[RMDB]
RNA sequence: GGGAACGACUCGAGUAGAGUCGAAAAGUUGACUUGUUCGCAAGUCAACAAAGAAACUGGAAGGCGCGGCGAGCUGCAGCCGCAGUGAAUCAAAUGCAGCAAAAACCCGACGGUUCGCCGUCGGGAACAACGUUAUAUAGUUCGCUAUAUAACGUUGAAAAGAAACAACAACAACAAC
Reactivity to 2A3 in 0.01 (KOAc 150mM, MgCl2 10mM, bicine 150mM(pH8.5), 24C), signal-to-noise 7, nucleotides 027 to 126: g000u000u000g000a000c000u000u010g020u060u100c130g020c110a000a000g000u000c000a000a000c000a000a010a000g030a020a150a010c080u110g050g130a120a030g140g020c050g010c000g040g000c010g020a040g010c000u000g000c000a000g000c000c010g000c030a030g070u100g110a030a050u110c050a040a010a050u070g000c000a000g000c010a020a030a010a030a040c010c000c000g000a000c010g000g050u020u050c220g030c070c000g000u000c000g000g000g000a000a000
Reactivity to DMS in 0.01 (KOAc 150mM, MgCl2 10mM, bicine 150mM(pH8.5), 24C), signal-to-noise 5, nucleotides 027 to 126: g000u000u000g010a020c000u000u010g010u010u020c210g020c010a000a000g000u000c000a000a000c000a050a110a130g010a100a110a110c040u010g000g020a100a080g010g020c090g020c010g010g010c000g010a130g010c010u000g020c000a160g000c000c010g000c000a060g030u000g010a100a110u010c170a010a020a050u000g000c010a020g020c010a050a060a040a110a070c010c000c000g010a010c010g010g010u010u020c240g020c000c000g020u000c000g000g000g010a020a030